RNA sequence: GGGAACGACUCGAGUAGAGUCGAAAAGCUAGCAUCUAAGUGGAUGCAGCAAUCAGGUUUAAGCCAACGGGUAAGCAAGCUACUGAUAGGGGAAGCAAUACCUCCAAUGUGAUGCACUUUCCCGAGGAAUUACAUACAUAUUCGUAUGUAUGUAAUUAAAAGAAACAACAACAACAAC
Reactivity to DMS in 0.01 (KOAc 150mM, MgCl2 10mM, bicine 150mM(pH8.5), 24C), signal-to-noise 9, nucleotides 027 to 126: g010c010u000a110g020c000a010u000c000u000a150a160g050u050g010g000a010u000g010c010a030g010c010a120a110u030c110a110g010g000u000u010u010a070a090g010c000c020a110a140c090g000g000g000u010a010a020g000c060a060a110g000c020u010a040c020u010g000a190u030a140g000g000g010g010a090a080g010c230a090a120u030a070c020c000u000c010c030a050a130u020g000u010g000a070u020g000c030a160c030u000u000u000c000c000c010g010a160g000g000
Reactivity to 2A3 in 0.01 (KOAc 150mM, MgCl2 10mM, bicine 150mM(pH8.5), 24C), signal-to-noise 7, nucleotides 027 to 126: g000c000u050a040g000c000a000u000c000u050a220a070g090u120g180g000a000u000g000c000a000g000c000a000a050u100c040a020g070g010u020u060u110a060a010g030c000c000a040a050c020g000g000g000u000a010a000g000c030a020a010g010c000u010a000c000u020g010a030u100a060g000g000g000g000a050a000g070c050a020a030u040a090c000c000u000c000c010a020a020u040g020u030g070a300u060g010c010a000c000u000u000u000c000c000c000g000a010g000g030